[RMDB]
The record gives the reactivity of an RNA of 177 nucleotides to DMS and 2A3.
The reactions ran in a buffer of 150 mM KOAc, 10 mM MgCl2 and 150 mM bicine (pH 8.5), at 24 C.
It was measured as part of the RMDB library OK1LIB.
Reactivities are given for positions 27 through 126.
RNA sequence: GGGAACGACUCGAGUAGAGUCGAAAACGACGCGCCGCGGUACGCGGAGCUGAUCAAACGCACCCAGUGGUGGGGCCGGCAGAUGCUGAUCUGGGGUGUACACGUGCAUGUCGGGAUUCGCUCGGCGAAGAGUUCAGUUUUUCGAAACUGAACUCUUAAAAGAAACAACAACAACAAC
Reactivity to DMS in 0.01 (KOAc 150mM, MgCl2 10mM, bicine 150mM(pH8.5), 24C), signal-to-noise 5, nucleotides 027 to 126: c090g010a070c060g020c000g030c020c010g010c040g000g020u040a050c080g010c010g010g000a040g000c030u020g000a140u010c050a060a140a140c150g000c090a140c010c000c030a100g000u030g010g030u010g000g000g010g010c040c040g010g000c030a060g000a090u020g020c060u020g010a060u020c030u010g000g000g000g020u000g020u000a060c090a060c080g000u000g010c040a060u010g020u010c010g000g000g020a120u010u010c110g000c030u000c030g000g000c080g000
Reactivity to 2A3 in 0.01 (KOAc 150mM, MgCl2 10mM, bicine 150mM(pH8.5), 24C), signal-to-noise 7, nucleotides 027 to 126: c030g030a010c020g010c000g000c010c020g020c050g090g170u240a110c110g000c010g040g000a010g010c010u030g030a130u040c060a040a100a020c080g010c040a110c010c010c010a040g050u100g090g070u060g010g040g010g000c020c000g030g000c020a050g040a160u170g050c020u070g030a110u030c020u040g030g000g010g010u040g020u050a040c080a010c050g070u070g010c030a030u100g020u040c000g000g000g040a040u070u060c040g010c070u030c020g060g000c010g020